RNA sequence: GGGAACGACUCGAGUAGAGUCGAAAAUCAUUUUUCCCAGUAUGGCCCCAGUGCUGUGGCUGAUUGUCUCUACUGAUGAAGCAACUGGAGAAUUGGGAAGUCAUUAGUCGCUGUGAGGUCAACUCCAGAGGAGCAAAACUGAUUUGAAAUUUGGCUACACUGCCUAGUACUUCGGUACUAGGCAGUGAAAAGAAACAACAACAACAAC
Reactivity to 2A3 in 0.01 (KOAc 150mM, MgCl2 10mM, bicine 150mM(pH8.5), 24C), signal-to-noise 2, nucleotides 027 to 156: u060c000a020u000u040u090u120u070c010c010c000a020g140u130a110u120g010g000c070c010c000c000a010g000u010g000c000u010g000u000g040g000c000u010g060a120u050u190g120u010c000u010c000u020a240c100u060g060a100u130g040a200a070g110c010a050a060c070u070g010g020a060g020a040a070u130u210g080g050g070a070a030g010u010c010a020u140u220a120g080u250c030g000c000u020g060u040g030a070g100g000u020c010a000a040c000u030c030c020a150g000a090g110g040a020g020c030a020a090a000a050c030u020g010a050u090u130u170g090a080a140a220u060u100u110g000g000c010u010a030
The record gives the reactivity of an RNA of 207 nucleotides to 2A3. The reactions ran in a buffer of 150 mM KOAc, 10 mM MgCl2 and 150 mM bicine (pH 8.5), at 24 C. The 2A3 profile rests on 489 reads. The data come from the RNA Mapping Database (RMDB), library OK3TST.